[RMDB]
RNA sequence: GGGAACGACUCGAGUAGAGUCGAAAAUCUCAACGCUUCGGCGUUGAGAAAAUAAAAGCCAUGCACCACCAAACCAGCAUGGCAAGCAAGGAAGGAAAAUAAAAACGGUUGUCUUCGGACAACCGAAUCUGGUAGAAUAGUUCGCUAUUCUACCAGAAAAAGAAACAACAACAACAAC
Reactivity to DMS in 0.01 (KOAc 150mM, MgCl2 10mM, bicine 150mM(pH8.5), 24C), signal-to-noise 2, nucleotides 027 to 126: u000c000u010c010a000a000c010g000c000u000u010c170g020g030c020g010u020u000g020a020g000a000a000a030a090u020a090a070a110a130g020c030c030a010u000g010c000a120c150c080a100c130c150a090a110a100c080c090a090g020c000a020u000g010g020c030a030a020g020c100a080a060g000g000a090a050g000g000a050a060a070a060u010a070a090a070a110a120c010g010g000u010u000g000u000c000u000u010c190g000g020a000c000a000a000c000c000g000a000a010
Reactivity to 2A3 in 0.01 (KOAc 150mM, MgCl2 10mM, bicine 150mM(pH8.5), 24C), signal-to-noise 2, nucleotides 027 to 126: u000c000u000c010a020a010c010g040c010u060u060c250g140g000c000g000u020u000g000a000g000a020a020a000a000u060a000a060a000a020g000c000c020a000u010g000c000a020c050c000a060c010c070a140a060a050c020c030a030g010c000a000u040g010g020c000a000a010g060c020a030a040g070g160a060a050g070g070a060a070a060a070u200a050a060a030a010a020c000g010g000u000u000g000u000c000u020u070c210g080g010a000c000a000a010c000c000g000a000a000
This 177-nucleotide RNA was probed chemically with DMS and 2A3. 2A3 adducts were read by reverse transcription with SuperScript II with manganese. For DMS the reverse transcriptase was MarathonRT. It was measured as part of the RMDB library M2PK50. The RNA was probed in 150 mM KOAc, 10 mM MgCl2 and 150 mM bicine (pH 8.5) at 24 C.